The record gives the reactivity of an RNA of 207 nucleotides to 2A3. Reactivities are given for positions 27 through 156. Conditions: 150 mM KOAc, 10 mM MgCl2 and 150 mM bicine (pH 8.5), 24 C. It was measured as part of the RMDB library OK3TST.
[RMDB]
RNA sequence: GGGAACGACUCGAGUAGAGUCGAAAAGUGUAUAGGCAAUCCGACCCUCCGCCUAUACACGAAUUAAGGAGGGUGGAGAUCUUAUGCUCGCGAUCUUACGUCACGAGCGACGGCCUGCGGCUCGUGACGCAUCUUACGCAGGCCAUAGCGAGCUACAACCUAUCGAUCAGUUCGCUGAUCGAUAGGUAAAAGAAACAACAACAACAAC
Reactivity to 2A3 in 0.01 (KOAc 150mM, MgCl2 10mM, bicine 150mM(pH8.5), 24C), signal-to-noise 1, nucleotides 027 to 156: g010u000g010u000a000u000a000g000g000c060a060a140u050c080c060g060a070c050c000c020u000c050c010g000c000c000u000a000u000a000c000a000c010g040a000a030u200u130a080a040g050g000a000g020g000g010u020g040g030a100g000a000u000c040u110u290a020u180g000c010u010c000g000c020g010a060u040c020u080u240a060c030g000u000c000a000c000g000a000g000c090g040a030c000g000g010c010c010u010g000c020g030g000c020u000c000g020u020g000a000c000g000c020a070u000c080u110u130a030c030g000c000a000g010g000c000c000a030u040a000g000c000g000a000g000c000u040a030c030a000